[RMDB]
RNA sequence: GGGAACGACUCGAGUAGAGUCGAAAAUGUUGCCCUCCAUGCCUGGCGUGUCACAGGCAUCACCUGCUGCCACUGCCCACCUUUCACUGCGGUGAUAAUUGCUAUUUUUUUUAAGACGGAGUCUCGCUCCGCCACCCAGGCUGGAGUGCAGUGGUGAUCAUGAUCAGGUGUUCGCACCUGAUCAUGAAAAAGAAACAACAACAACAAC
Reactivity to 2A3 in 0.01 (KOAc 150mM, MgCl2 10mM, bicine 150mM(pH8.5), 24C), signal-to-noise 1, nucleotides 027 to 156: u120g030u080u130g030c000c000c000u000c020c000a000u080g000c000c000u000g000g010c110g090u060g110u180c120a030c010a140g040g000c000a000u000c000a000c000c000u150g100c010u040g000c000c000a090c030u020g100c000c090c040a130c030c000u050u250u190c170a130c110u100g030c070g050g000u000g090a020u090a120a100u140u230g000c090u030a280u160u080u060u030u000u020u060u110a030a010g000a000c000g020g010a030g030u000c030u060c270g150c000u000c000c000g030c020c000a000c000c000c000a000g000g000c010u010g000g000a010g010u030g000c000a000g000u000g000g020u000g000a020
The record gives the reactivity of an RNA of 207 nucleotides to 2A3. For 2A3 the reverse transcriptase was SuperScript II with manganese. The data come from the RNA Mapping Database (RMDB), library OK3TST. The reactions ran in a buffer of 150 mM KOAc, 10 mM MgCl2 and 150 mM bicine (pH 8.5), at 24 C.